The data come from the RNA Mapping Database (RMDB), library RFMREP. An RNA of 177 nucleotides, treated with DMS and read out base by base.
[RMDB]
RNA sequence: GGGAACGACUCGAGUAGAGUCGAAAAGGUGUUUGCAGCAGCAAAUUGCUGCGUUCUUUGAUGUCACCACCGAUGUGAUAUGGCAAGCCGCAGUUGGCAAAGGAAACGUAGGGGCCACGCUCGAACAGUAUUCAAAUGCGUUCGCGCAUUUGAAUACAAAAGAAACAACAACAACAAC
Reactivity to DMS in 0.01 (KOAc 150mM, MgCl2 10mM, bicine 150mM(pH8.5), 24C), signal-to-noise 1, nucleotides 027 to 126: g010g020u000g000u000u000u000g030c040a040g040c020a080g020c050a050a090a110u020u000g010c000u010g010c010g020u000u000c020u020u000u000g010a110u000g010u020c000a010c060c040a140c140c090g010a090u020g000u000g010a020u000a020u000g000g030c040a030a050g020c300c090g010c080a140g020u000u000g010g010c080a040a080a060g010g010a040a000a060c020g010u010a100g010g020g010g010c030c010a020c130g000c060u010c090g020a050a060c110a110
DMS adducts were read by reverse transcription with MarathonRT.